[RMDB]
RNA sequence: GGGAACGACUCGAGUAGAGUCGAAAAGAUGGUGACCAUCAACCCAGAAAUUAACAUGGGUGUACUGGCGGGUAUCAUUACCGGUCUGGUUGGUGGCGCAGCCUAUAACCGUUGGUCCGAUAUUAAACUAGCUGCAAACAUUCGUGUUUGCAGCUAGAAAAGAAACAACAACAACAAC
Reactivity to 2A3 in 0.01 (KOAc 150mM, MgCl2 10mM, bicine 150mM(pH8.5), 24C), signal-to-noise 1, nucleotides 027 to 126: g060a020u100g000g040u100g000a170c040c000a000u020c010a000a080c040c020c010a000g030a040a090a090u300u270a100a050c050a090u090g040g010g020u020g070u040a070c010u000g100g030c070g030g000g020u050a060u210c020a030u070u130a040c020c020g070g000u000c020u040g000g010u000u040g020g000u010g020g050c060g000c090a010g030c030c000u100a090u120a100a090c040c020g020u040u060g030g060u000c030c000g050a060u030a100u200u270a020a040a130
Reactivity to DMS in 0.01 (KOAc 150mM, MgCl2 10mM, bicine 150mM(pH8.5), 24C), signal-to-noise 2, nucleotides 027 to 126: g000a050u000g000g040u000g040a140c010c000a050u010c010a070a050c020c000c010a040g000a070a120a140u010u000a060a120c150a110u000g000g010g000u000g000u000a030c090u000g010g010c110g000g040g000u000a030u020c140a100u000u000a040c000c020g010g000u000c040u000g000g000u000u000g020g000u000g000g010c080g000c070a070g030c000c020u000a050u000a130a060c050c050g010u000u000g000g030u000c030c040g000a090u080a080u000u000a090a120a250

This 177-nucleotide RNA was probed chemically with 2A3 and DMS.
The 2A3 profile rests on 749 reads.
The DMS profile rests on 1,210 reads.
Conditions: 150 mM KOAc, 10 mM MgCl2 and 150 mM bicine (pH 8.5), 24 C.